[RMDB]
RNA sequence: GGGAACGACUCGAGUAGAGUCGAAAAAAGGCUUCGGCCUUAUGGACUCCUAAGUCGUUUGCGAUGAGACGGUUUGUUCAUCGAUCAUACUCGGAAACGAGUAUGGGAGAACAAACCGUCGAGCAAACGAUAUGGAUAAUACGGACUUCGGUCCGAAAUGGCCUAUGAUAUUCGUAUCAUAGGCCAUAAAAGAAACAACAACAACAAC
Reactivity to DMS in 0.01 (KOAc 150mM, MgCl2 10mM, bicine 150mM(pH8.5), 24C), signal-to-noise 1, nucleotides 027 to 156: a020a040g010g010c020u010u010c220g040g000c000c000u000u030a030u000g020g000a250c090u000c000c010u000a110a160g000u000c000g000u020u000u010g020c000g000a290u040g000a250g010a010c000g000g020u000u000u000g000u000u000c010a270u010c180g000a120u010c000a010u000a000c010u020c000g010g000a140a130a220c010g020a030g020u000a000u000g040g000g000a070g000a020a010c000a010a000a010c000c010g010u000c000g000a030g000c020a010a010a030c000g000a000u010a040u000g020g000a110u000a090a130u000a090c030g050g010a010c010u000u000c260g030g010u000c000c000g000a010a060
Reactivity to 2A3 in 0.01 (KOAc 150mM, MgCl2 10mM, bicine 150mM(pH8.5), 24C), signal-to-noise 3, nucleotides 027 to 156: a000a000g030g000c070u060u100c290g110g000c000c000u040u000a070u050g070g040a070c100u040c020c000u090a140a010g010u000c010g020u000u000u030g080c100g150a300u250g100a130g000a040c000g020g000u030u000u030g000u000u030c090a250u200c190g060a040u110c010a000u010a010c010u010c010g030g040a110a080a040c000g020a000g000u000a010u010g020g010g010a030g000a000a010c010a000a000a000c000c000g000u000c000g000a000g000c000a000a000a000c000g000a000u000a000u040g010g000a030u060a200a010u040a230c040g070g000a000c010u060u070c300g120g000u000c020c030g040a000a020